[RMDB]
RNA sequence: GGGAACGACUCGAGUAGAGUCGAAAACACCAAGGGAUAGCAUACAUAGUAUUAAUCUCUAUGACUAACAGAAGCAUAUAAGCAUUCUCCAUUGGAGCAAAGGCUUUCUUUGGCUACAGCUAGGGCAAUGUAUAGGCGAGUUCGCUCGCCUAUACAUAAAAGAAACAACAACAACAAC
Reactivity to 2A3 in 0.01 (KOAc 150mM, MgCl2 10mM, bicine 150mM(pH8.5), 24C), signal-to-noise 6, nucleotides 027 to 126: c100a010c020c000a050a050g060g000g020a040u030a060g100c020a030u040a080c010a020u160a080g080u080a040u080u100a130a080u040c030u000c010u030a060u070g090a090c010u050a160a000c040a080g060a130a010g040c060a040u060a030u040a210a020g010c020a060u110u010c010u010c030c010a180u070u270g030g010a010g000c060a100a020a040g090g000c000u050u070u040c040u050u120u050g040g000c010u050a040c050a060g020c020u080a030g060g030g020c030a050
Reactivity to DMS in 0.01 (KOAc 150mM, MgCl2 10mM, bicine 150mM(pH8.5), 24C), signal-to-noise 4, nucleotides 027 to 126: c170a190c020c040a140a080g020g030g040a070u010a110g010c090a050u020a130c050a070u020a100g010u020a110u020u020a150a060u030c090u010c030u010a060u010g000a170c110u000a040a040c070a060g000a110a020g020c060a050u010a080u010a040a040g030c040a110u020u020c030u010c020c010a140u010u040g000g000a020g010c100a030a050a070g000g000c030u000u000u000c080u010u030u030g000g030c060u000a070c160a060g010c030u010a060g000g000g010c170a110